Source: RMDB library OK3TST, as collected in RNAgym. An RNA of 207 nucleotides, treated with DMS and 2A3 and read out base by base. The RNA was probed in 150 mM KOAc, 10 mM MgCl2 and 150 mM bicine (pH 8.5) at 24 C.
[RMDB]
RNA sequence: GGGAACGACUCGAGUAGAGUCGAAAAGCCGUUUUGCGUAGAGGAACGAUAUUGUCGUUGAAAUAGACGUUGAGAUUGUCCUUUUCGUUUACGUACCGAUCGUAGAUUCGACGAUUGGAUAUGACGGACAACACUUGCAGAGCAUUGCCGAGGGUGCUCCUUAGCACAACUUCGGUUGUGCUAAGGAAAAAGAAACAACAACAACAAC
Reactivity to DMS in 0.01 (KOAc 150mM, MgCl2 10mM, bicine 150mM(pH8.5), 24C), signal-to-noise 4, nucleotides 027 to 156: g040c020c020g010u000u000u000u010g020c050g040u010a100g010a090g020g020a070a070c040g020a090u010a050u000u010g020u000c010g000u000u000g010a100a180a170u000a140g030a040c020g010u000u000g000a060g000a120u000u000g010u020c020c010u010u010u010u000c050g020u000u000u000a060c040g060u010a180c010c000g010a030u010c000g000u000a110g020a260u020u000c080g020a060c010g010a040u000u000g030g030a090u000a080u010g000a080c040g000g010a080c050a030a070c030a060c050u000u000g020c000a100g000a100g010c050a080u000u010g010c010c040g000a240g020g020g020u000g000c030
Reactivity to 2A3 in 0.01 (KOAc 150mM, MgCl2 10mM, bicine 150mM(pH8.5), 24C), signal-to-noise 6, nucleotides 027 to 156: g040c010c000g000u040u020u080u090g040c030g020u030a010g000a020g050g030a130a090c030g020a060u020a070u070u140g060u060c030g020u010u080g060a040a030a020u150a060g100a040c010g030u030u110g020a040g010a130u040u040g000u010c000c000u010u000u010u100c060g040u050u110u110a070c050g020u010a060c000c010g000a010u000c000g000u020a050g080a300u170u180c100g050a010c000g000a010u010u010g000g010a020u020a050u110g050a020c030g000g030a020c020a090a010c030a050c070u040u120g020c040a010g030a010g040c020a040u040u130g010c020c040g040a070g010g020g040u040g020c020